An RNA of 207 nucleotides, treated with 2A3 and read out base by base. Source: RMDB library OK3TST, as collected in RNAgym. 2A3 adducts were read by reverse transcription with SuperScript II with manganese.
RNA sequence: GGGAACGACUCGAGUAGAGUCGAAAACAGUUUUGGCCUUGGCUUAACUUCCUAGCUUUGUUCACUUGGAAGCUUGAUAAGGUAGAAUAUCAGUUGUAUAACCGAGCACCAUUGCUUAUGGUAAUAAUGACUCAUGAUUACUGAAUUGCAUAAGGACUCACCCUUUCCUGUUCGCAGGAAAGGGUGAAAAAGAAACAACAACAACAAC
Reactivity to 2A3 in 0.01 (KOAc 150mM, MgCl2 10mM, bicine 150mM(pH8.5), 24C), signal-to-noise 2, nucleotides 027 to 156: c010a050g020u010u010u010u140g080g000c020c020u050u040g030g000c010u080u100a030a030c000u000u030c010c010u030a050g000c080u090u140u150g100u270u110c050a010c080u010u000g000g030a000a000g020c000u010u050g010a020u070a210a020g030g010u000a030g080a060a000u070a010u140c030a010g020u010u020g060u110a140u010a090a060c030c020g000a010g000c020a030c090c100a070u160u090g000c010u100u040a100u210g020g020u040a000a010u180a050a050u080g170a130c020u030c140a010u070g050a060u120u100a030c040u010g050a160a160u130u060g020c010a030u060a060a070g020g060a110c040
The RNA was probed in 150 mM KOAc, 10 mM MgCl2 and 150 mM bicine (pH 8.5) at 24 C.